RNA sequence: GGGAACGACUCGAGUAGAGUCGAAAAGAAACGCAAGGCCGCUGACCGACGGGAUAUUGUGGGGCUUACCACAAGGGACGCGGCGUUAUCACUUGCCUUUUAAGCCGACCGUCUGGGCUGCAUACAAACCACCCAACUAUCUUCGGAUAGUUGGGAACCUAAUGAGCUGGUUCGCCAGCUCAUUAGGAAAAGAAACAACAACAACAAC
Reactivity to DMS in 0.01 (KOAc 150mM, MgCl2 10mM, bicine 150mM(pH8.5), 24C), signal-to-noise 1, nucleotides 027 to 156: g000a120a100a010c030g070c030a090a120g000g040c000c010g010c030u000g000a250c030c020g050a130c030g000g000g010a160u000a070u000u010g030u000g040g070g020g050c190u010u000a120c040c060a060c000a070a060g020g020g010a290c100g000c030g000g020c040g000u000u000a120u000c050a090c000u010u000g080c000c040u000u010u010u000a000a080g010c040c020g000a070c010c080g000u000c040u020g010g000g010c000u010g000c040a130u010a090c090a010a040a210c020c040a120c010c000c010a020a000c010u000a010u000c000u000u020c300g010g000a020u000a040g020u040u000g000g000g000a010a000
Reactivity to 2A3 in 0.01 (KOAc 150mM, MgCl2 10mM, bicine 150mM(pH8.5), 24C), signal-to-noise 2, nucleotides 027 to 156: g000a000a060a010c110g000c050a010a000g170g000c000c000g020c080u050g090a000c000c020g010a010c020g030g070g050a090u110a060u140u060g010u030g010g000g060g080c060u110u130a040c000c010a030c010a070a090g030g000g010a020c070g000c000g000g000c020g000u000u020a040u040c000a010c140u030u020g000c000c000u050u170u010u160a060a060g000c000c030g070a040c010c020g020u000c020u080g010g010g000c000u060g020c030a040u130a060c040a030a060a040c020c020a060c010c000c000a000a000c000u010a000u000c020u000u010c140g110g000a000u000a000g000u000u000g000g000g010a000a010

Source information:
This 207-nucleotide RNA was probed chemically with DMS and 2A3. 2A3 adducts were read by reverse transcription with SuperScript II with manganese. The RNA was probed in 150 mM KOAc, 10 mM MgCl2 and 150 mM bicine (pH 8.5) at 24 C.